Source: RMDB library OK2TST, as collected in RNAgym. An RNA of 177 nucleotides, treated with 2A3 and DMS and read out base by base. High DMS reactivity at an A or C suggests that its Watson-Crick edge is free. For DMS, 1,560 sequencing reads were counted.
RNA sequence: GGGAACGACUCGAGUAGAGUCGAAAAGUAUUAUCAGAACGAUUUGUGAAUUACUUCAAACAUCAUCAAAUGGAAGUUGAUGGGCAUCGUGCAGAUGUGUUAUUUAGAAAUGGAUUAGCAGAAGCUACCAAGUAUGGUCUUUCGAGACCAUACUUGGAAAAGAAACAACAACAACAAC
Reactivity to 2A3 in 0.01 (KOAc 150mM, MgCl2 10mM, bicine 150mM(pH8.5), 24C), signal-to-noise 2, nucleotides 027 to 126: g000u000a020u150u050a100u080c000a010g070a180a000c020g060a070u100u060u010g080u010g040a050a030u070u050a070c040u000u090c050a060a110a170c010a020u030c000a000u040c010a020a030a180u100g230g010a100a150g060u020u010g010a020u030g000g070g030c010a000u030c030g060u050g000c040a020g030a070u040g000u000g050u130u020a100u020u090u080a100g010a040a120a000u090g080g000a030u060u110a020g030c050a010g040a240a010g000c010u020a010
Reactivity to DMS in 0.01 (KOAc 150mM, MgCl2 10mM, bicine 150mM(pH8.5), 24C), signal-to-noise 2, nucleotides 027 to 126: g010u010a050u020u010a090u000c060a110g000a060a110c190g020a100u000u000u020g030u010g010a130a060u010u020a070c090u000u020c080a060a110a200c050a050u020c040a010u000c050a030a050a080u010g000g010a120a100g010u010u000g000a040u010g010g000g010c020a020u000c030g020u010g030c130a050g000a070u010g040u000g000u010u000a050u000u000u010a040g000a060a060a110u000g000g000a070u010u010a060g020c050a100g010a070a120g010c050u000a100